The record gives the reactivity of an RNA of 177 nucleotides to DMS. DMS adducts were read by reverse transcription with MarathonRT.

[RMDB]
RNA sequence: GGGAACGACUCGAGUAGAGUCGAAAAUACUUGGCCGUGUAGUCCACGGCUCACAGCAAGAACGAGGCCCUGGGAGGUUUGGAAGAAAUACAAGCUGUGGACCUCACCUGGAGGGGAGGCUUUGCAGCCCUUGCGUCAAGUUCGCUUGACGCAAGGGAAAAGAAACAACAACAACAAC
Reactivity to DMS in 0.01 (KOAc 150mM, MgCl2 10mM, bicine 150mM(pH8.5), 24C), signal-to-noise 1, nucleotides 027 to 126: u000a050c070u020u020g020g000c040c000g000u000g020u000a170g020u000c280c050a040c030g000g000c000u030c120a020c090a000g000c060a040a090g000a170a160c150g000a080g000g010c020c020c000u000g000g030g000a070g010g010u000u000u010g010g070a100a090g020a040a030a080u020a120c090a100a200g000c020u010g000u000g010g020a020c010c000u000c020a070c020c040u010g020g030a130g020g000g000g010a030g000g030c120u000u010u000g000c010a120g020